[RMDB]
RNA sequence: GGGAACGACUCGAGUAGAGUCGAAAACUGUGAAGCAGCCUUGCUCACGGGUUGAGCCGCGCCUCCGCUCAGGGAACCCUGAGCAAAUACGCCCUGAUCCCCACAUAAAGGGCCAAUUAACUGCGCCGUCUCCGGGAACAAAUCCGCUAACAGGGUGGAUGCUACCAAGAUUCGUCUUGGUAGCAUCAAAAGAAACAACAACAACAAC
Reactivity to DMS in 0.01 (KOAc 150mM, MgCl2 10mM, bicine 150mM(pH8.5), 24C), signal-to-noise 1, nucleotides 027 to 156: c010u000g040u020g020a110a170g060c000a080g020c070c060u000u000g000c020u030c000a040c060g000g000g040u000u000g000a100g050c010c050g000c050g000c040c030u030c150c030g020c000u000c020a060g060g020g010a110a090c120c010c000u000g030a050g000c000a070a050a100u000a170c100g020c030c040c020u010g010a140u000c040c010c010c060a090c100a250u000a040a140a060g020g010g010c070c050a110a060u000u000a070a140c080u000g010c000g000c020c010g010u020c000u000c000c040g000g030g020a060a070c040a000a060a140u000c040c000g000c030u000a100a100c010a050g020g010g080u000g020
Reactivity to 2A3 in 0.01 (KOAc 150mM, MgCl2 10mM, bicine 150mM(pH8.5), 24C), signal-to-noise 2, nucleotides 027 to 156: c010u010g000u070g100a190a030g050c020a020g050c010c050u090u110g020c020u020c010a030c030g000g000g050u050u120g070a020g040c040c040g050c040g060c030c050u180c080c120g030c000u000c010a020g110g000g010a150a130c060c000c000u000g000a000g000c010a000a000a010u090a020c060g010c010c110c000u000g040a100u080c000c000c050c020a040c020a070u180a040a090a020g000g000g000c000c000a060a010u160u150a050a150c090u040g010c050g040c050c020g050u030c040u050c030c010g130g000g000a000a050c040a040a080a040u050c060c040g000c050u010a080a000c040a020g000g020g050u060g060